[RMDB]
This 170-nucleotide RNA was probed chemically with 2A3 and DMS.
The reactions ran in a buffer of 150 mM KOAc, 10 mM MgCl2 and 150 mM bicine (pH 8.5), at 24 C.
2A3 adducts were read by reverse transcription with SuperScript II with manganese.
It was measured as part of the RMDB library 15KLIB.
Reactivities are given for positions 27 through 129.
RNA sequence: GGGAACGACUCGAGUAGAGUCGAAAAUGCAUUUCUGAGACUUCAACUGAACAAGUUGACGUUUCUCAUGAGACUUCUGACGACGAGUGGGCUGCUGCAGUUGAUGAAGCGUUCCCUCUCGAUGAAGCAAGAAACUGGUUCGCCAGUUUCAAAAGAAACAACAACAACAAC
Reactivity to 2A3 in 0.01 (KOAc 150mM, MgCl2 10mM, bicine 150mM(pH8.5), 24C), signal-to-noise 9, nucleotides 027 to 129: u150g010c030a060u030u080u020c040u050g000a000g010a010c000u000u000c000a010a000c010u030g070a100a060c100a280a010g000u000u010g000a010c010g010u020u170u010c010u000c020a030u180g040a020g050a080c010u020u000c010u060g110a100c080g010a020c040g000a000g010u110g000g020g010c030u140g000c010u030g010c060a100g030u200u140g130a220u080g040a090a000g010c000g020u090u120c000c010c000u000c000u000c000g040a050u070g030a010a010g030c050a050a060
Reactivity to DMS in 0.01 (KOAc 150mM, MgCl2 10mM, bicine 150mM(pH8.5), 24C), signal-to-noise 9, nucleotides 027 to 129: u020g010c140a090u040u040u030c060u000g000a050g010a040c010u010u010c000a020a010c000u000g000a090a090c180a170a020g010u000u000g020a020c060g000u000u010u000c020u010c070a070u090g030a030g030a130c010u020u020c000u040g030a210c290g000a030c100g030a010g000u020g020g010g010c270u050g030c010u000g010c040a080g000u060u090g040a180u020g000a000a000g000c020g020u020u060c000c000c000u030c010u000c000g000a120u000g000a030a030g040c080a080a050